[RMDB]
RNA sequence: GGGAACGACUCGAGUAGAGUCGAAAAACUUUUAACACUGUACAGCAACAUAUGAUGGCUGGUGGGCAACGUGGCUAUAAUCCACAUACUGGCCGCCGUCGCUCAAGUCGUGAAGUAACGAACAUCGCCAUGUAAGUCCGUUCGCGGACUUACAUGGAAAAGAAACAACAACAACAAC
Reactivity to DMS in 0.01 (KOAc 150mM, MgCl2 10mM, bicine 150mM(pH8.5), 24C), signal-to-noise 2, nucleotides 027 to 126: a060c040u000u000u000u000a050a110c110a030c050u000g000u020a140c080a040g010c030a060a090c100a110u010a100u030g010a080u000g030g000c060u010g010g070u000g020g010g010c030a020a070c200g010u000g010g010c070u010a040u000a130a110u000c080c130a020c150a030u010a050c200u020g000g000c000c000g030c050c050g000u010c120g010c000u000c070a030a030g040u000c030g000u000g020a040a130g020u020a050a070c060g010a100a090c060a110u000c120g000
Reactivity to 2A3 in 0.01 (KOAc 150mM, MgCl2 10mM, bicine 150mM(pH8.5), 24C), signal-to-noise 2, nucleotides 027 to 126: a050c000u020u050u010u130a100a010c030a020c040u070g060u170a070c010a020g000c020a060a060c000a100u180a110u250g110a060u140g060g000c040u100g020g000u010g030g010g000c020a020a020c060g000u010g000g000c000u040a030u070a260a070u040c060c020a010c040a070u100a090c090u030g040g000c000c000g000c040c030g090u020c030g010c010u030c060a070a030g040u060c050g000u040g030a070a020g060u040a060a030c040g000a060a010c060a110u100c030g050